[RMDB]
RNA sequence: GGGAACGACUCGAGUAGAGUCGAAAAUUCAGAGCCUUCGGGCUCUGAACCGUUUUCCUUGUUCCCAUUAUUGGUAACACGGUAAUAAAAGGAAAGUUGCCGCAACUUGUUCGUUCGCGAACAAGAAGAUAAAACCCGUGUUCGCACGGGUUUUAUCAAAAGAAACAACAACAACAAC
Reactivity to DMS in 0.01 (KOAc 150mM, MgCl2 10mM, bicine 150mM(pH8.5), 24C), signal-to-noise 1, nucleotides 027 to 126: u000u000c000a000g000a000g000c010c000u000u000c220g020g010g020c020u020c000u000g030a010a020c100c020g020u000u000u000u000c010c010u000u010g040u010u000c030c020c000a190u010u000a040u000u000g010g000u020a090a040c060a140c050g000g010u000a050a040u000a070a080a070a060g040g000a040a050a100g010u020u000g010c010c040g000c300a080a190c010u000u000g000u000u000c000g020u010u010c150g030c030g000a020a020c000a000a010g000a050a070